RNA sequence: GGGAACGACUCGAGUAGAGUCGAAAAUGUGGCCUUUACCCUGGGUGAGAUGGGAGCAAGAGGAGGGCUUGGAGUAGAGAAGUGACAAGAUCUGACUUACAUUUUAAUGGGACCACUCUGACUGCAGUGUUUGGAACAGACAGGGAGGGUCAAGCCAUGCUUCGAUUAAGUUCGCUUAAUCGAAGCAAAAAGAAACAACAACAACAAC
Reactivity to 2A3 in 0.01 (KOAc 150mM, MgCl2 10mM, bicine 150mM(pH8.5), 24C), signal-to-noise 1, nucleotides 027 to 156: u120g000u060g020g000c010c020u030u090u070a110c060c000c000u020g000g010g020u080g010a160g000a050u010g000g000g050a050g010c020a060a000g000a000g070g000a000g000g000g000c050u060u060g120g000a050g020u180a030g040a000g000a050a000g090u020g110a050c000a050a120g010a140u030c080u090g030a070c010u100u120a010c000a110u150u040u090u160a070a130u030g010g000g000a000c000c000a080c030u000c000u000g050a050c010u000g040c000a050g070u000g080u220u100u090g050g000a120a020c010a000g070a050c000a000g000g020g000a060g000g000g000u000c000a020a020g020c030c000a040

The record gives the reactivity of an RNA of 207 nucleotides to 2A3. The reactions ran in a buffer of 150 mM KOAc, 10 mM MgCl2 and 150 mM bicine (pH 8.5), at 24 C. Reactivities are given for positions 27 through 156. The data come from the RNA Mapping Database (RMDB), library OK3TST. For 2A3 the reverse transcriptase was SuperScript II with manganese.